Background:
Structure probing data (DMS and 2A3) for a 177-nucleotide construct. Conditions: 150 mM KOAc, 10 mM MgCl2 and 150 mM bicine (pH 8.5), 24 C. Values are in units of 0.01, from 0 to 300, in steps of 10.

RNA sequence: GGGAACGACUCGAGUAGAGUCGAAAAGAUAUGGACCGUGGCAGUUCGAUAAGCGACUGGUCGGAAACGACCACUCGCUUUUGACGAACUGCACGGUCCUAAGUCAAAAGGUGCAGUUCGCUGCACCCCUUGAUGAAGAGUUCGCUCUUCAUCAAGGAAAAGAAACAACAACAACAAC
Reactivity to DMS in 0.01 (KOAc 150mM, MgCl2 10mM, bicine 150mM(pH8.5), 24C), signal-to-noise 7, nucleotides 027 to 126: g010a060u000a300u010g010g000a010c000c000g010u000g020g030c000a010g010u000u000c010g020a120u010a030a010g010c000g030a010c130u000g010g010u000c000g000g000a080a110a200c010g010a020c000c000a010c140u000c000g010c000u000u000u000u000g010a250c190g000a000a010c000u000g000c000a000c010g000g000u000c000c000u000a000a060g010u000c040a110a070a100a100g010g010u000g010c000a010g000u010u010c270g020c010u000g000c000a010c000c010
Reactivity to 2A3 in 0.01 (KOAc 150mM, MgCl2 10mM, bicine 150mM(pH8.5), 24C), signal-to-noise 3, nucleotides 027 to 126: g010a000u060a030u160g000g000a000c010c020g020u050g300g190c010a010g010u020u010c050g060a090u030a270a020g000c000g010a010c020u010g010g000u000c020g010g000a080a070a010c010g000a000c010c000a010c010u010c000g010c040u010u010u010u030g060a040c020g000a000a000c000u000g000c000a000c000g010g010u000c000c000u000a010a000g010u010c000a000a000a040a090g000g000u000g000c000a010g010u060u180c220g100c150u000g000c000a000c010c000

About this RNA: For DMS, 13,693 sequencing reads were counted. Reactivities are given for positions 27 through 126.